[RMDB]
RNA sequence: GGGAACGACUCGAGUAGAGUCGAAAAUUGACGGUGGGGUCGUCUUUACUCCAAUGAGCAUCGAACCACAGCGAAGUGGUUUCAUCGCAAAGAUGCAUUAGUCACGGAGCCACGUUGACAUGGCUAAAUCCGAGGGACUAUUCGUAGUCCCUCGGAUAAAAGAAACAACAACAACAAC
Reactivity to DMS in 0.01 (KOAc 150mM, MgCl2 10mM, bicine 150mM(pH8.5), 24C), signal-to-noise 1, nucleotides 027 to 126: u010u020g010a040c030g030g050u000g010g000g000g020u010c090g020u000c040u010u030u000a080c070u010c010c110a080a070u010g030a090g000c060a040u020c080g000a070a050c020c010a000c020a080g020c230g020a120a060g050u000g000g010u000u000u000c090a070u000c180g010c130a050a060a100g010a020u010g010c000a170u010u000a030g000u000c040a030c140g000g000a060g010c040c020a020c070g010u000u000g020a060c080a150u000g010g000c030u000a060a050
This 177-nucleotide RNA was probed chemically with DMS. The DMS profile rests on 1,074 reads. DMS adducts were read by reverse transcription with MarathonRT.